[RMDB]
RNA sequence: GGGAACGACUCGAGUAGAGUCGAAAACUUGGCUAUUACGCCACCAGAAAAAUGACAGUGAAUGGAAAUGGCCCUUGAUGCAGGGCGCAGUCAUUAUUAGUGCUGCGUUGAUACAGGCAUUAGGAUGGUUCCUCUUGGGGUUCGCCCCAAGAGGAACAAAAGAAACAACAACAACAAC
Reactivity to DMS in 0.01 (KOAc 150mM, MgCl2 10mM, bicine 150mM(pH8.5), 24C), signal-to-noise 1, nucleotides 027 to 126: c050u010u000g030g000c030u010a130u000u000a070c200g010c080c000a150c050c060a110g020a020a060a130a030a080u000g010a120c120a100g000u000g020a170a070u020g000g000a040a050a040u020g010g000c010c010c040u000u000g020a080u000g020c050a030g010g010g000c000g000c010a000g010u000c050a020u020u010a120u020u020a080g030u010g030c000u000g000c000g010u020u000g010a100u000a180c140a110g010g020c010a020u000u000a000g000g000a190u010g010
Reactivity to 2A3 in 0.01 (KOAc 150mM, MgCl2 10mM, bicine 150mM(pH8.5), 24C), signal-to-noise 1, nucleotides 027 to 126: c030u060u080g040g000c000u000a000u240u120a070c150g020c000c000a000c010c010a060g240a120a150a030a020a010u170g000a050c050a110g070u030g110a170a020u050g000g060a060a050a090u030g070g000c010c000c000u000u060g030a050u010g080c040a020g040g000g000c000g000c000a000g030u120c070a040u040u140a050u140u200a070g010u090g020c020u000g030c010g040u000u020g030a000u020a180c050a110g100g020c010a010u010u000a040g010g000a080u110g070

This 177-nucleotide RNA was probed chemically with DMS and 2A3.
For 2A3 the reverse transcriptase was SuperScript II with manganese.
For DMS, 815 sequencing reads were counted.
Values cover nucleotides 27 to 126.
The data come from the RNA Mapping Database (RMDB), library OK2TRN.